RNA sequence: GGGAACGACUCGAGUAGAGUCGAAAAGUGGGUGGUAAAUUCCAUCUAGGGCUAAAUAUAAGUGAGAGACCGAUAGCAAACAAGUACCGUGAGGGAAAGAUGAAAAGAACUUUGAAAAUAGAGUUAACAUAUUGGCAGGGUUCGCCCUGCCAAUAUGAAAAGAAACAACAACAACAAC
Reactivity to 2A3 in 0.01 (KOAc 150mM, MgCl2 10mM, bicine 150mM(pH8.5), 24C), signal-to-noise 2, nucleotides 027 to 126: g120u040g000g000g000u000g030g000u060a040a040a040u290u050c000c000a000u000c010u040a050g000g120g050c030u080a000a190a000u170a250u020a190a000g090u140g020a020g000a000g000a070c030c020g040a050u120a030g020c060a020a020a020c000a020a020g000u000a000c010c000g010u040g110a010g000g000g030a000a000a000g040a020u080g000a000a000a000a170g090a040a040c040u000u030u100g230a100a080a120a000u150a070g120a000g020u010u070a070a000
Reactivity to DMS in 0.01 (KOAc 150mM, MgCl2 10mM, bicine 150mM(pH8.5), 24C), signal-to-noise 3, nucleotides 027 to 126: g010u020g010g010g040u010g000g000u000a040a100a100u030u020c010c000a020u010c030u000a130g000g000g010c040u030a010a080a180u040a120u030a060a130g000u020g000a090g000a100g000a100c020c000g060a060u000a080g020c060a080a070a140c070a040a060g000u010a090c040c070g000u020g000a140g000g000g000a030a050a070g000a090u010g000a080a030a070a060g000a070a070c080u000u010u010g010a040a050a040a120u050a050g010a090g010u010u000a050a220